[RMDB]
RNA sequence: GGGAACGACUCGAGUAGAGUCGAAAACCAAUGUUUUUGCUUGUUUGCUCUUUCCCUAGAAAGGAAUAGUAGUGACUGUCUUUGAAGCAUUGAUGCUUGCGAUUGCUUUCGCAACAUUAAUUGUCAACCAUCUGUUAUCGUUCGCGAUAACAGAUGGAAAAGAAACAACAACAACAAC
Reactivity to DMS in 0.01 (KOAc 150mM, MgCl2 10mM, bicine 150mM(pH8.5), 24C), signal-to-noise 2, nucleotides 027 to 126: c000c010a120a070u010g010u000u000u000u010u010g000c060u000u000g000u000u000u000g010c010u000c020u000u000u000c000c000c000u010a150g020a110a160a160g000g000a020a030u010a020g010u000a030g020u000g000a050c100u000g010u000c060u000u000u010g000a070a170g010c050a050u000u000g000a000u000g000c260u000u000g030c030g010a020u010u010g000c240u010u000u000c000g000c010a000a010c000a010u000u000a000a030u000u010g020u010c100a110a200
The record gives the reactivity of an RNA of 177 nucleotides to DMS.
It was measured as part of the RMDB library RFMREP.
For DMS the reverse transcriptase was MarathonRT.
The RNA was probed in 150 mM KOAc, 10 mM MgCl2 and 150 mM bicine (pH 8.5) at 24 C.